Notes:
Chemical mapping of a 177-nucleotide RNA with 2A3 and DMS. The reactions ran in a buffer of 150 mM KOAc, 10 mM MgCl2 and 150 mM bicine (pH 8.5), at 24 C. 2A3 adducts were read by reverse transcription with SuperScript II with manganese. For DMS the reverse transcriptase was MarathonRT. The 2A3 profile rests on 574 reads.

[RMDB]
RNA sequence: GGGAACGACUCGAGUAGAGUCGAAAAAGGGUUAGGAUUGCAAAGACUUGGAUACAUUCUAGAAGAAAUGAAUCGGGCACCAGGAGGAAAGAUGUACGCAGAUGACACUGCUGGCUGGGACACCCGCCUACGCGUGCGUGUUCGCACGCACGCGUAGAAAAGAAACAACAACAACAAC
Reactivity to 2A3 in 0.01 (KOAc 150mM, MgCl2 10mM, bicine 150mM(pH8.5), 24C), signal-to-noise 1, nucleotides 027 to 126: a000g050g000g030u020u010a110g000g050a140u070u140g000c010a150a030a000g070a140c000u030u060g110g000a010u070a120c000a050u020u010c020u000a020g020a180a000g050a090a220a010u040g040a090a000u160c020g030g010g000c030a060c110c040a140g000g060a030g000g020a180a000a000g080a020u000g000u000a000c010g030c020a110g090a140u110g000a030c020a000c060u060g000c010u000g030g000c000u000g000g000g000a020c020a090c040c000c000g040c000
Reactivity to DMS in 0.01 (KOAc 150mM, MgCl2 10mM, bicine 150mM(pH8.5), 24C), signal-to-noise 1, nucleotides 027 to 126: a150g000g000g000u000u000a010g010g010a050u060u020g040c070a050a060a070g010a050c020u010u020g000g010a050u010a110c010a110u000u000c020u000a070g000a040a200g010a010a010a060u010g040a080a000u020c080g020g000g000c160a120c080c050a000g020g000a150g000g000a030a050a140g000a080u010g000u000a050c170g010c000a000g040a190u000g000a100c300a040c040u000g010c010u040g010g000c000u030g040g000g000a140c160a010c020c000c000g030c230